[RMDB]
The record gives the reactivity of an RNA of 207 nucleotides to DMS and 2A3. For DMS the reverse transcriptase was MarathonRT. The data come from the RNA Mapping Database (RMDB), library M2RFPK. The DMS profile rests on 3,768 reads. Values cover nucleotides 27 to 156.
RNA sequence: GGGAACGACUCGAGUAGAGUCGAAAAACUUGUAUAGGCGAUUAAUAAAUCUUCUGUAAAUGCUGUAAGAUGAUUACCCCUUGAGGUUUCAGCACUAGGCUGCUCUAGCGAUUAAUCAAUGCAUUUGUAACGGAAAGACAGUUCGCUGUCUUUCCAACGUCAAUUCUAAGUUCGCUUAGAAUUGACGAAAAGAAACAACAACAACAAC
Reactivity to DMS in 0.01 (KOAc 150mM, MgCl2 10mM, bicine 150mM(pH8.5), 24C), signal-to-noise 2, nucleotides 027 to 156: a070c050u010u010g040u000a070u000a090g020g030c040g030a100u000u000a070a080u010a080a110a090u000c030u010u020c020u000g000u000a100a100a110u000g000c030u010g000u000a040a100g000a080u000g000a120u020u000a080c030c000c020c060u000u010g000a070g010g010u000u000u010c030a110g000c000a030c040u000a060g020g030c020u000g000c150u000c010u000a050g020c030g020a160u000u000a090a090u010c040a100a170u010g020c040a130u010u000u000g010u000a090a200c090g000g010a020a030a010g000a020c020a030g000u000u020c280g030c030u010g030u000c000u000u010u000c010c010a020a040
Reactivity to 2A3 in 0.01 (KOAc 150mM, MgCl2 10mM, bicine 150mM(pH8.5), 24C), signal-to-noise 4, nucleotides 027 to 156: a000c060u100u080g050u070a130u100a110g050g040c020g030a030u050u190a190a140u200a190a170a070u010c020u120u020c030u070g070u070a030a060a050u050g000c020u020g080u160a080a040g050a080u040g000a030u040u070a020c000c010c010c000u010u030g030a050g030g030u020u140u210c030a000g000c000a020c110u080a090g230g000c000u020g010c000u010c010u040a010g040c020g050a060u000u130a040a010u040c030a040a060u070g030c010a020u010u020u060g080u070a080a020c070g000g000a000a000a000g000a000c000a000g010u040u070c170g020c060u000g000u000c000u010u000u000c000c000a000a000